An RNA of 177 nucleotides, treated with 2A3 and DMS and read out base by base. DMS adducts were read by reverse transcription with MarathonRT. Reactivities are given for positions 27 through 126. 2A3 adducts were read by reverse transcription with SuperScript II with manganese.
RNA sequence: GGGAACGACUCGAGUAGAGUCGAAAAGAUAUGGAGGAUGAACUACUCGCGAAUAUUAGAGGUCGGAAACGACUACCCACCUAAUAAACGAGCAUCCUCCUAAGUCAAAUCAGGGUUCGCCCUGAAAGAUAAUACCGAUCUUCGGAUCGGUAUUAUCAAAAGAAACAACAACAACAAC
Reactivity to 2A3 in 0.01 (KOAc 150mM, MgCl2 10mM, bicine 150mM(pH8.5), 24C), signal-to-noise 3, nucleotides 027 to 126: g040a040u060a030u160g000g020a010g000g010a000u030g000a070a090c070u180a050c000u300c010g000c080g100a180a050u040a010u120u020a010g000a010g030g020u000c020g020g000a040a040a050c010g020a010c000u030a040c040c040c010a040c020c010u010a030a020u030a010a140a020c010g000a000g010c000a010u000c000c010u000c000c000u000a030a010g000u010c020a020a020a180u050c000a010g040g000g020u040u120c200g220c010c010c020u010g030a040a000a010
Reactivity to DMS in 0.01 (KOAc 150mM, MgCl2 10mM, bicine 150mM(pH8.5), 24C), signal-to-noise 3, nucleotides 027 to 126: g020a040u000a300u000g020g010a000g000g010a010u010g000a090a060c090u000a300c020u010c030g000c070g010a130a150u000a060u000u000a000g020a070g060g000u000c010g000g010a140a060a160c010g020a020c010u000a040c080c020c090a300c070c010u000a000a000u000a060a180a110c010g000a010g020c010a020u000c020c000u000c010c000u000a010a040g020u010c020a060a090a130u000c000a000g000g000g010u010u000c300g020c010c000c010u010g000a010a110a070